Structure probing data (2A3 and DMS) for a 177-nucleotide construct. It was measured as part of the RMDB library OK2TRN. The reactions ran in a buffer of 150 mM KOAc, 10 mM MgCl2 and 150 mM bicine (pH 8.5), at 24 C. DMS adducts were read by reverse transcription with MarathonRT.
[RMDB]
RNA sequence: GGGAACGACUCGAGUAGAGUCGAAAAUGCAGUGUCACCUCUCUGUUCUCUGUCUUUGGUCUGGCACCUUUUACUGCCUCUGUGACCUGGAGUGUGCACGUAUCUCGUCCAAACUGAGGUGUAAGGCUGUGCAGGAUAUAUUCGUAUAUCCUGCACAAAAAGAAACAACAACAACAAC
Reactivity to 2A3 in 0.01 (KOAc 150mM, MgCl2 10mM, bicine 150mM(pH8.5), 24C), signal-to-noise 5, nucleotides 027 to 126: u110g000c020a010g030u010g060u100c010a030c020c010u020c000u000c020u060g060u140u030c040u000c010u040g130u080c040u070u090u110g060g000u030c040u030g050g000c010a050c010c000u040u140u050u110a090c050u050g030c000c010u020c040u060g110u080g060a050c000c010u030g020g000a040g010u100g000u040g020c030a020c090g020u030a070u050c050u020c020g070u030c020c010a060a070a070c060u090g010a010g050g010u020g020u060a080a020g090g000c050
Reactivity to DMS in 0.01 (KOAc 150mM, MgCl2 10mM, bicine 150mM(pH8.5), 24C), signal-to-noise 8, nucleotides 027 to 126: u010g010c050a050g010u010g010u000c030a050c050c020u000c030u000c070u000g000u000u000c030u000c040u010g010u000c060u000u000u000g000g010u000c030u000g010g030c060a060c070c040u000u000u000u000a090c130u000g010c020c010u000c080u000g010u010g000a060c060c050u010g000g010a060g010u010g000u000g020c060a060c130g010u000a080u000c050u000c080g010u000c050c050a040a070a110c120u000g000a030g000g020u000g010u000a070a070g010g010c110